An RNA of 207 nucleotides, treated with 2A3 and read out base by base.
[RMDB]
RNA sequence: GGGAACGACUCGAGUAGAGUCGAAAACUGAUUUCGAUCAGCAAAAUACCUUUGUGUACUCUGAUCGUAGGCGACGAUCCGUAACAUCUAUCCCAUUGGGAUAGUGGGGGAGCCUACAUGAGAAGUACACUCUGGUGACUCGUCGCUUCGGCGACAACUCACGUAGCUACUUCGGUAGCUACGUGAGAAAAGAAACAACAACAACAAC
Reactivity to 2A3 in 0.01 (KOAc 150mM, MgCl2 10mM, bicine 150mM(pH8.5), 24C), signal-to-noise 4, nucleotides 027 to 156: c020u020g010a020u060u140u150c300g080a010u020c010a000g090c100a020a050a070a110u230a040c010c000u030u040u000g000u000g000u000a010c000u000c000u060g190a060u020c140g000u000a000g000g000c010g020a300c010g000a120u000c010c000g040u080a070a070c040a240u060c040u000a000u010c000c010c100a300u100u300g000g000g000a010u010a010g000u040g040g000g000g000g000a000g000c010c000u000a000c010a000u050g040a010g010a120a020g000u000a000c000a000c000u000c000u000g020g010u010g010a040c050u050c210g000u000c000g000c020u070u060c230g190g000c000g010a000c000a000a040
Annotation: Source: RMDB library RNAMAK, as collected in RNAgym.